[RMDB]
RNA sequence: GGGAACGACUCGAGUAGAGUCGAAAAACGCUACCUUUCGAGGUAGCGUCACCUACUUGGCGCAACCGUCGAGUCGUUCCCAUGGUUGCGUGAAGUAGUUUGAGUGGCAGACGUUCGCGUCUGCCAAGGAGUUCAUAACAUUCGUGUUAUGAACUCCAAAAGAAACAACAACAACAAC
Reactivity to DMS in 0.01 (KOAc 150mM, MgCl2 10mM, bicine 150mM(pH8.5), 24C), signal-to-noise 2, nucleotides 027 to 126: a040c010g030c000u000a000c000c000u000u000u010c150g010a030g010g010u000a000g010c000g010u000c050a080c290c000u000a010c000u000u010g010g010c010g000c000a000a020c020c010g030u020c180g000a060g010u000c000g020u000u000c000c010c020a030u010g010g020u000u000g000c000g030u000g010a010a010g000u000a010g010u000u010u010g010a160g000u000g000g000c000a010g000a010c000g020u010u010c200g010c010g020u000c000u000g020c000c000a000a000